[RMDB]
An RNA of 177 nucleotides, treated with 2A3 and DMS and read out base by base.
The 2A3 profile rests on 1,445 reads.
The RNA was probed in 150 mM KOAc, 10 mM MgCl2 and 150 mM bicine (pH 8.5) at 24 C.
RNA sequence: GGGAACGACUCGAGUAGAGUCGAAAAUCCUAACGCUUCGGCGUUAGGAAAAGUUAAUUGGCAGAUUAACAUGUUAGUAUUAGAAUCUAACUAGUCUAAAAAAAACUGCGUGGUUCGCCACGCAGAACGUACGAUCAUACUUCGGUAUGAUCGUACGAAAAGAAACAACAACAACAAC
Reactivity to 2A3 in 0.01 (KOAc 150mM, MgCl2 10mM, bicine 150mM(pH8.5), 24C), signal-to-noise 1, nucleotides 027 to 126: u000c000c000u000a010a010c020g030c000u030u040c130g120g000c010g000u000u000a010g010g000a000a050a020a020g020u040u040a020a010u070u040g200g080c090a040g050a190u030u030a040a000c030a070u110g010u010u030a030g050u030a060u070u160a030g070a130a100u030c020u030a000a020c000u000a020g060u030c070u300a030a020a000a000a000a010a090a160c000u000g010c000g000u000g020g110u080u010c200g000c100c000a010c000g010c010a000g000a000a000
Reactivity to DMS in 0.01 (KOAc 150mM, MgCl2 10mM, bicine 150mM(pH8.5), 24C), signal-to-noise 1, nucleotides 027 to 126: u000c000c000u000a000a000c000g080c020u000u010c180g030g040c000g030u000u000a000g000g000a020a000a030a160g000u000u000a010a010u000u000g030g000c200a120g000a100u000u000a010a010c010a080u000g000u000u000a010g000u000a110u000u020a080g000a130a130u010c000u000a030a030c020u000a080g000u010c040u010a000a000a000a030a060a000a220a110c030u000g000c000g040u000g020g000u000u000c250g020c020c000a000c020g000c010a000g030a020a030